Source: RMDB library OK3TST, as collected in RNAgym.
Chemical mapping of a 207-nucleotide RNA with 2A3 and DMS.
Values cover nucleotides 27 to 156.

RNA sequence: GGGAACGACUCGAGUAGAGUCGAAAAGCGCGACCAGGGAAAUACAACCAUCUCCAUUUACUGCAUCUGUAACCACCCCGGAUUGCAUGAAAGCCUUUGCUGUCUUGUUUGUGCUGAGUUUAAUAAAAACUGAGUUAAGACCCUCCUACGGACUACCUACACAAAUCCUAUUCGUAGGAUUUGUGUAAAAAGAAACAACAACAACAAC
Reactivity to 2A3 in 0.01 (KOAc 150mM, MgCl2 10mM, bicine 150mM(pH8.5), 24C), signal-to-noise 2, nucleotides 027 to 156: g000c020g010c010g060a030c000c020a020g070g010g020a040a070a050u160a060c070a030a070c040c030a090u040c050u000c050c010a040u070u120u110a110c070u050g010c050a050u070c050u050g060u110a030a060c020c020a060c020c040c000c030g000g030a060u050u120g000c040a010u080g070a140a100a040g030c000c020u110u050u080g020c050u030g050u090c000u080u070g050u080u130u090g060u020g000c000u010g010a010g060u020u060u050a270a150u180a060a210a030a000a000c020u040g050a010g050u000u050a040a010g030a050c000c000c020u040c020c010u020a020c020g010g010a020c020u050a020c030c040
Reactivity to DMS in 0.01 (KOAc 150mM, MgCl2 10mM, bicine 150mM(pH8.5), 24C), signal-to-noise 2, nucleotides 027 to 156: g020c060g040c040g020a120c030c030a110g000g010g010a130a080a090u000a070c040a090a130c040c000a120u010c030u010c030c030a130u000u010u000a100c070u010g000c010a070u000c030u000g010u010a040a080c050c050a060c030c000c050c010g020g030a090u000u010g060c000a080u000g010a110a070a180g010c030c030u000u000u000g000c020u010g000u000c020u000u000g020u000u000u000g010u010g020c030u000g010a070g000u000u000u000a070a150u010a080a080a040a080a090c040u010g000a070g040u000u000a090a140g000a060c030c010c010u000c020c040u000a130c060g010g020a050c020u010a100c100c020
High 2A3 reactivity points to a flexible backbone, as in loops and unpaired stretches. Conditions: 150 mM KOAc, 10 mM MgCl2 and 150 mM bicine (pH 8.5), 24 C. DMS adducts were read by reverse transcription with MarathonRT.